[RMDB]
RNA sequence: GGGAACGACUCGAGUAGAGUCGAAAAGGACUGCGCAGUCCGCCAACAUCAGCAGAGAGCCCGCUAUACGUGACGGAUUGGCUGAAGCGUACAGAAAUAUUGAGCCUCCUGCAAGAGGCAGCCAAGCAAAACGUACGUGAGUUCGCUCACGUACGAAUCAAAGAAACAUCUUCGGAUGUUUCUUUGAAAAAGAAACAACAACAACAAC
Reactivity to DMS in 0.01 (KOAc 150mM, MgCl2 10mM, bicine 150mM(pH8.5), 24C), signal-to-noise 2, nucleotides 027 to 156: g000g020a080c030u020g020c060g010c100a090g010u000c000c010g060c040c030a090a090c070a100u000c080a180g000c030a070g010a120g000a050g010c000c010c030g020c050u010a080u000a050c030g020u000g020a300c060g000g000a240u010u000g030g020c030u010g000a100a300g030c030g030u000a110c040a060g010a040a110a200u000a140u010u010g020a080g000c010c000u010c010c020u010g020c130a070a140g020a080g030g030c000a020g010c000c000a030a110g010c100a070a080a100a160c010g070u000a030c000g010u000g010a040g060u010u000c300g010c010u000c010a010c000g000u010a010c000g000a020a080
Reactivity to 2A3 in 0.01 (KOAc 150mM, MgCl2 10mM, bicine 150mM(pH8.5), 24C), signal-to-noise 4, nucleotides 027 to 156: g020g010a010c030u080g040c180g040c150a000g030u000c020c010g000c030c010a050a050c030a090u150c030a000g020c020a010g050a020g010a030g080c030c080c030g020c040u060a030u020a160c080g050u060g070a030c040g060g000a140u070u060g020g000c010u030g020a040a000g040c010g020u040a020c040a030g140a040a150a020u230a090u170u200g030a070g000c000c000u030c010c030u080g050c030a070a040g020a020g050g000c000a000g000c000c010a020a040g040c070a020a070a020a030c010g000u010a010c000g010u000g000a000g000u050u090c210g000c090u010c000a010c000g000u000a000c000g000a000a020